RNA sequence: GGGAACGACUCGAGUAGAGUCGAAAAGAUAUGGAUUGAACUACGUCUUCCCUGGGACAUCGAUCUCGGAAACGAGGGAGUCCCAGCAGACGCAAUCCUAAGUCAAAGGGUCGCUUCGGCGACCCAAGAGCCAUUGUAAGUUCGCUUACAAUGGCUCAAAAGAAACAACAACAACAAC
Reactivity to 2A3 in 0.01 (KOAc 150mM, MgCl2 10mM, bicine 150mM(pH8.5), 24C), signal-to-noise 1, nucleotides 027 to 126: g050a030u070a020u180g010g010a000u040u000g000a100a060c120u150a040c300g020u070c010u020u000c100c000c040u000g020g020g010a000c000a230u260c120g080a180u040c000u000c030g010g070a120a070a040c020g020a000g000g000g030a040g000u030c020c010c010a000g040c010a010g000a000c010g000c040a000a020u060c000c000u030a080a040g050u010c040a000a250a000g000g020g000u020c000g000c000u060u100c270g210g030c010g000a000c000c000c000a000a000
Reactivity to DMS in 0.01 (KOAc 150mM, MgCl2 10mM, bicine 150mM(pH8.5), 24C), signal-to-noise 1, nucleotides 027 to 126: g010a050u000a300u010g020g000a010u010u000g000a180a200c090u030a300c040g000u000c000u000u000c060c200c010u050g000g020g030a010c030a220u030c150g000a090u010c000u000c000g030g000a140a040a210c010g070a000g000g000g000a020g010u000c000c000c000a000g030c140a020g010a020c000g040c000a000a010u000c000c000u000a060a180g000u010c040a060a160a130g000g020g030u000c010g030c050u000u010c180g020g030c000g100a010c000c010c000a000a020
Notes: This 177-nucleotide RNA was probed chemically with 2A3 and DMS. The DMS profile rests on 690 reads. The reactions ran in a buffer of 150 mM KOAc, 10 mM MgCl2 and 150 mM bicine (pH 8.5), at 24 C. Values are in units of 0.01, from 0 to 300, in steps of 10. The 2A3 profile rests on 1,400 reads.